The record gives the reactivity of an RNA of 177 nucleotides to 2A3. Source: RMDB library RFM100, as collected in RNAgym. 2A3 adducts were read by reverse transcription with SuperScript II with manganese. Conditions: 150 mM KOAc, 10 mM MgCl2 and 150 mM bicine (pH 8.5), 24 C.
RNA sequence: GGGAACGACUCGAGUAGAGUCGAAAAUCCUCAUAUAUUGUUCUAGAUCCCAUGCAUGAUGCAUAUCGAUCGAUCUGAUCUGAAUUAGGUCAUCGAUGCGCAUCUGGAUCCCCAUCUUGUUGAUAGUACCAUGACUCAAGUUCGCUUGAGUCAUGGUAAAAGAAACAACAACAACAAC
Reactivity to 2A3 in 0.01 (KOAc 150mM, MgCl2 10mM, bicine 150mM(pH8.5), 24C), signal-to-noise 2, nucleotides 027 to 126: u000c000c000u060c070a030u180a050u060a030u070u210g120u010u170c050u070a020g020a010u000c000c000c000a160u260g020c040a070u220g000a020u000g000c000a010u020a000u000c000g000a000u000c150g000a000u030c000u040g020a020u020c150u260g210a300a080u000u000a030g010g010u000c010a000u000c020g000a000u000g010c010g000c000a000u000c000u000g010g050a080u030c000c000c010c020a020u100c010u130u080g050u000u040g040a050u000a160g050u020